[RMDB]
RNA sequence: GGGAACGACUCGAGUAGAGUCGAAAAUUUUGAUGGUGGCGCCAUCCAUCGUAAAGAUGUUGCCAAGGAUAUCAGCAGCGAACUGAGUGUCCGACUCGGCAGCCGUUACCACGCCAUAGUCGACAUCUACAUGCGACACUUUCGAGUGUCGCAUGUAAAAAGAAACAACAACAACAAC
Reactivity to DMS in 0.01 (KOAc 150mM, MgCl2 10mM, bicine 150mM(pH8.5), 24C), signal-to-noise 1, nucleotides 027 to 126: u000u000u000u030g010a060u000g030g010u000g000g000c090g010c040c070a040u010c070c020a060u020c030g020u020a060a190a100g000a050u020g010u030u000g010c040c050a150a150g000g020a010u010a100u010c030a010g020c020a090g020c170g000a070a160c020u010g000a040g030u010g000u010c020c030g000a090c090u030c180g000g030c040a040g010c000c070g000u010u010a020c040c120a170c140g000c010c060a090u010a110g010u010c040g040a150c130a060u010c070